[RMDB]
RNA sequence: GGGAACGACUCGAGUAGAGUCGAAAAGUUAGCUGGUUCAUACUAGCCCUGUUAUAUGGCGUUUUGAACUAGUGAAGUUUAAGUAAUAUAACUAUGAUCGUAGAGGUUAAUGACGAGAUGCGUUUGGACAGGGGUUCAAUUCCCCUCAUCUCCAUAGCCAUAUGAGAUCCUUCGGGAUCUCAUAUGGAAAAGAAACAACAACAACAAC
Reactivity to 2A3 in 0.01 (KOAc 150mM, MgCl2 10mM, bicine 150mM(pH8.5), 24C), signal-to-noise 3, nucleotides 027 to 156: g140u140u100a020g020c000u020g030g000u000u000c020a030u070a130c110u160a140g000c010c010c010u020g010u060u010a030u010a010u020g000g000c000g000u000u010u200u040g010a000a000c010u010a000g010u030g090a040a040g040u090u200u200a030a000g010u020a010a020u020a010u010a040a000c020u020a050u270g060a070u090c040g050u090a030g030a090g130g030u030u070a080a010u130g050a020c040g000a000g000a030u010g010c060g070u070u100u160g090g020a070c040a050g000g000g000g000u000u080c010a000a010u050u060c000c000c000c020u000c000a000u000c000u000c010c010a050u070a050g030
Reactivity to DMS in 0.01 (KOAc 150mM, MgCl2 10mM, bicine 150mM(pH8.5), 24C), signal-to-noise 1, nucleotides 027 to 156: g000u010u030a160g040c000u010g040g020u000u000c000a090u000a130c110u020a150g020c000c000c060u010g000u000u010a060u000a130u010g030g040c030g000u000u000u000u000g000a000a030c040u010a040g040u000g000a110a170g050u000u020u000a030a120g010u010a060a100u010a080u000a060a050c010u000a110u000g010a090u010c100g010u000a100g010a120g010g010u000u000a060a070u010g020a160c050g010a080g020a070u000g010c000g010u000u000u000g060g000a120c100a040g010g040g010g000u020u000c180a020a260u000u000c000c010c000c010u010c020a030u010c000u080c020c030a070u010a190g050

Record summary
Source: RMDB library ARCHII, as collected in RNAgym. Chemical mapping of a 207-nucleotide RNA with 2A3 and DMS. 2A3 adducts were read by reverse transcription with SuperScript II with manganese. For DMS, 2,264 sequencing reads were counted. The RNA was probed in 150 mM KOAc, 10 mM MgCl2 and 150 mM bicine (pH 8.5) at 24 C.